Source: RMDB library M2PK50, as collected in RNAgym. This 177-nucleotide RNA was probed chemically with DMS and 2A3. For DMS the reverse transcriptase was MarathonRT. The RNA was probed in 150 mM KOAc, 10 mM MgCl2 and 150 mM bicine (pH 8.5) at 24 C.
[RMDB]
RNA sequence: GGGAACGACUCGAGUAGAGUCGAAAAGAGUAUAGCUUCGGCUAUACUCAAAACACUACAUGCAGCCCUCUAGGUGUGUAGUGACAGUAAGCGCGCAAAUAAAAACGACAGGGUUCGCCCUGUCGAACAAGUCGUUACUGUUCGCAGUAACGACUUGAAAAGAAACAACAACAACAAC
Reactivity to DMS in 0.01 (KOAc 150mM, MgCl2 10mM, bicine 150mM(pH8.5), 24C), signal-to-noise 1, nucleotides 027 to 126: g010a020g000u000a010u000a000g000c010u000u020c240g030g000c000u000a000u000a020c010u000c000a010a040a090a190c010a010c020u000a000c020a010u000g000c000a140g020c000c030c040u000c090u010a040g010g000u000g000u010g020u000a010g010u000g000a210c160a090g020u000a070a170g020c040g000c070g060c050a110a110a190u000a020a080a060a070a080c030g000a020c000a000g040g010g000u000u000c210g030c030c020c000u000g010u000c010g000a020a080
Reactivity to 2A3 in 0.01 (KOAc 150mM, MgCl2 10mM, bicine 150mM(pH8.5), 24C), signal-to-noise 2, nucleotides 027 to 126: g010a000g010u020a000u010a010g040c000u010u020c260g050g000c000u000a010u000a010c000u000c000a010a010a000a000c020a000c000u010a010c000a020u020g020c020a050g080c030c020c010u090c110u170a090g140g000u030g000u020g000u010a010g000u020g000a020c020a010g120u190a180a060g060c030g010c050g000c130a070a160a110u250a110a110a100a020a040c010g010a010c000a000g000g000g000u020u050c120g110c000c000c010u000g000u000c000g000a000a010